[RMDB]
RNA sequence: GGGAACGACUCGAGUAGAGUCGAAAAACGGCGGCGUCCAUCCAAGCGGUGAGCACAUCCGGACGGCCGGGAUGAGCUGCGGCGGCAACGUAUGCGUCGGCGGCCGGCAAUUCGGUUACCCCGGCUGCUUGUUGCUACAGUUCGCUGUAGCAACAAGAAAAGAAACAACAACAACAAC
Reactivity to DMS in 0.01 (KOAc 150mM, MgCl2 10mM, bicine 150mM(pH8.5), 24C), signal-to-noise 2, nucleotides 027 to 126: a080c090g020g000c050g020g020c040g010u000c030c040a070u000c060c110a090a120g020c090g010g000u000g010a110g010c050a060c080a070u000c050c010g000g000a200c110g030g010c030c010g020g000g000a060u000g000a100g020c030u020g000c030g010g000c030g020g010c070a110a020c070g030u010a070u020g000c040g000u000c110g020g000c040g010g020c000c000g000g010c100a100a120u000u010c060g010g000u010u000a100c120c100c010c010g010g010c030u000g020
Reactivity to 2A3 in 0.01 (KOAc 150mM, MgCl2 10mM, bicine 150mM(pH8.5), 24C), signal-to-noise 1, nucleotides 027 to 126: a000c030g010g020c000g020g020c040g020u000c020c010a050u090c050c010a100a030g020c070g060g060u050g070a000g080c040a030c000a200u000c000c010g080g020a060c010g010g050c010c000g030g020g020a130u160g050a020g000c030u030g000c010g050g000c000g030g000c010a000a020c000g080u130a060u300g070c040g020u070c040g070g040c000g030g000c000c000g040g000c040a030a040u150u120c030g100g040u080u060a070c000c040c010c000g000g000c010u010g030